[RMDB]
RNA sequence: GGGAACGACUCGAGUAGAGUCGAAAAGAAACCUUUCGAGGUUUCCUUUAAUCCUAAGUCUAUUGGGAGUGCUUACAUUCAUCGAUCUCGGAAACGAGGGAGAAUUACAGCACAUCGAUCAAUAGAUAUGGACGAGUGCCGCGUUUCGACGCGGCAAAACAUGAUCCGAAUUCGUUCGGAUCAUGUUAAAAGAAACAACAACAACAAC
Reactivity to DMS in 0.01 (KOAc 150mM, MgCl2 10mM, bicine 150mM(pH8.5), 24C), signal-to-noise 2, nucleotides 027 to 156: g020a060a000a050c000c000u010u000u000c230g020a020g030g000u000u000u000c000c000u000u010u000a060a070u000c000c000u000a060a300g000u000c010u000a020u000u000g010g040g030a100g020u000g040c020u000u020a230c300a050u020u000c030a190u010c110g000a150u000c010u010c020g000g020a180a140a250c010g000a010g010g010g000a100g030a050a030u000u000a150c300a050g000c000a010c000a140u000c100g020a130u020c040a000a030u000a030g000a000u010a300u000g000g000a070c000g020a210g000u000g020c010c000g060c000g000u000u000u000c300g030a090c020g010c000g030g040c010a000a010
Reactivity to 2A3 in 0.01 (KOAc 150mM, MgCl2 10mM, bicine 150mM(pH8.5), 24C), signal-to-noise 3, nucleotides 027 to 156: g010a000a010a010c020c000u040u100u290c300g070a020g040g010u000u010u070c000c010u080u070u210a100a070u020c010c000u050a190a000g000u000c000u000a000u000u020g040g000g010a020g010u000g000c000u030u030a040c030a090u000u020c010a100u300c070g090a070u040c010u000c010g020g040a110a100a070c010g000a000g010g020g000a050g000a000a000u030u030a040c070a020g000c000a030c060a140u130c020g130a100u070c000a000a000u000a000g010a000u010a040u040g030g000a020c080g050a070g140u070g010c000c000g020c010g000u020u100u100c170g020a020c010g000c000g000g000c000a030a020